[RMDB]
RNA sequence: GGGAACGACUCGAGUAGAGUCGAAAAGCUCUGAGAGACAGAUCGUACAACAAAGAGAGAUCGAAAAUCUUAGGGGAGAGAACGAAUCUGUCGUCUUCUCUAGGACAUUGUCGAUCAGAUGUCCAAAGACCUUACAUUGCUUCGGCAAUGUAAGGUCAAAAGAAACAACAACAACAAC
Reactivity to 2A3 in 0.01 (KOAc 150mM, MgCl2 10mM, bicine 150mM(pH8.5), 24C), signal-to-noise 3, nucleotides 027 to 126: g030c000u000c000u040g030a030g000a000g000a000c000a000g000a000u020c000g040u110a030c060a210a030c100a060a300a000g100a040g020a010g000a050u010c020g010a010a050a010a090u000c000u020u000a020g000g000g080g000a000g000a000g030a040a020c030g020a070a170u120c150u220g120u070c060g110u030c000u000u010c010u000c020u010a000g010g000a000c030a110u040u110g020u020c000g000a000u000c000a000g010a050u090g030u000c000c000a010a070a000
Reactivity to DMS in 0.01 (KOAc 150mM, MgCl2 10mM, bicine 150mM(pH8.5), 24C), signal-to-noise 1, nucleotides 027 to 126: g000c060u000c050u000g000a010g000a300g030a000c000a070g000a000u000c030g000u030a130c220a180a130c300a070a060a010g070a210g000a060g000a000u000c010g000a100a040a130a100u000c000u000u000a000g070g000g000g000a000g020a110g000a070a060c100g040a100a090u040c220u070g000u050c040g080u000c000u000u040c010u000c000u000a000g000g000a080c170a050u000u000g000u000c020g000a280u000c000a060g000a000u000g000u010c000c050a010a060a050